This 207-nucleotide RNA was probed chemically with DMS and 2A3. Conditions: 150 mM KOAc, 10 mM MgCl2 and 150 mM bicine (pH 8.5), 24 C. Reactivities are given for positions 27 through 156.
RNA sequence: GGGAACGACUCGAGUAGAGUCGAAAAUACUUCUGGGAGUUCUGAUAGUAAAAAGUGUGACAUCCAUGACACAUACAUUGCCAGUCAAUGAUGGAUAGAAAUGGACAGACUUUGAGGAGAUGAGUUUUGAGUAUACAGAGAUACCAUUUUGUGUGUGAGACCGACUAUUAUUCGUAAUAGUCGGUCUAAAAGAAACAACAACAACAAC
Reactivity to DMS in 0.01 (KOAc 150mM, MgCl2 10mM, bicine 150mM(pH8.5), 24C), signal-to-noise 3, nucleotides 027 to 156: u010a050c020u000u000c060u020g040g020g010a190g010u000u000c020u010g000a160u010a070g010u000a060a090a070a060a050g030u000g010u000g010a090c070a120u010c020c030a070u010g000a250c080a080c020a090u000a110c020a040u000u000g020c040c100a130g020u000c030a030a070u000g020a070u000g020g010a120u000a050g010a060a120a050u000g000g020a120c030a080g020a070c040u000u010u000g010a150g010g010a120g000a150u000g010a080g020u000u010u010u010g010a110g010u000a070u010a210c070a090g020a130g010a110u000a060c030c030a090u000u000u000u000g030u000g000u000g030u000g000
Reactivity to 2A3 in 0.01 (KOAc 150mM, MgCl2 10mM, bicine 150mM(pH8.5), 24C), signal-to-noise 2, nucleotides 027 to 156: u110a030c020u020u140c010u110g040g000g020a110g000u100u030c010u020g080a080u050a080g120u150a010a090a070a050a020g060u100g040u040g130a070c050a030u000c020c020a040u070g020a030c010a000c000a020u170a150c020a020u070u050g020c030c090a040g100u170c000a030a010u010g040a010u000g000g020a010u050a150g050a070a140a000u000g020g000a010c020a020g070a020c000u120u120u120g050a070g000g010a030g000a020u070g020a020g100u000u100u100u150g070a050g030u070a010u020a150c050a010g050a000g020a050u050a080c030c000a010u070u040u100u040g070u010g000u000g000u000g030
For 2A3 the reverse transcriptase was SuperScript II with manganese. DMS adducts were read by reverse transcription with MarathonRT.